Background:
This 177-nucleotide RNA was probed chemically with DMS and 2A3. Reactivities are given for positions 27 through 126. It was measured as part of the RMDB library M2PK50. The reactions ran in a buffer of 150 mM KOAc, 10 mM MgCl2 and 150 mM bicine (pH 8.5), at 24 C.
RNA sequence: GGGAACGACUCGAGUAGAGUCGAAAACUAGCAGGGUUCGCCCUGCUAGAAAAGCGCGGAUGGUAGUGUGGGGUCUCCCCAUGCGAGAGUAGGGAACUGCCAAAAGUGAAGUGUUCGCACUUCACAACAAUGAUUCUGGGUUCGCCCAGAAUCAUUGAAAAGAAACAACAACAACAAC
Reactivity to DMS in 0.01 (KOAc 150mM, MgCl2 10mM, bicine 150mM(pH8.5), 24C), signal-to-noise 3, nucleotides 027 to 126: c000u000a010g020c010a000g010g020g040u000u010c230g020c020c010c000u010g010c000u010a000g000a020a050a080a110g010c070g010c050g010g000a070u030g000g020u010a050g000u000g020u000g010g000g000g000u010c100u010c010c010c010c020a010u000g010c020g010a150g000a080g020u000a100g000g010g010a080a090c040u000g030c020c070a060a070a050a180g020u000g010a010a000g010u000g010u010u010c190g010c000a010c000u010u000c000a000c010a090a120
Reactivity to 2A3 in 0.01 (KOAc 150mM, MgCl2 10mM, bicine 150mM(pH8.5), 24C), signal-to-noise 2, nucleotides 027 to 126: c000u000a000g040c000a010g050g000g010u080u140c150g120c000c010c000u000g000c000u000a000g000a000a000a000a000g040c040g000c020g060g060a060u050g040g020u020a050g010u000g000u020g040g000g020g140u010c140u140c070c000c000c010a010u010g000c010g030a050g020a000g040u180a070g000g020g020a070a050c030u050g030c020c000a070a080a030a020g000u000g010a000a000g000u000g030u070u120c240g030c040a000c010u000u010c010a010c000a000a000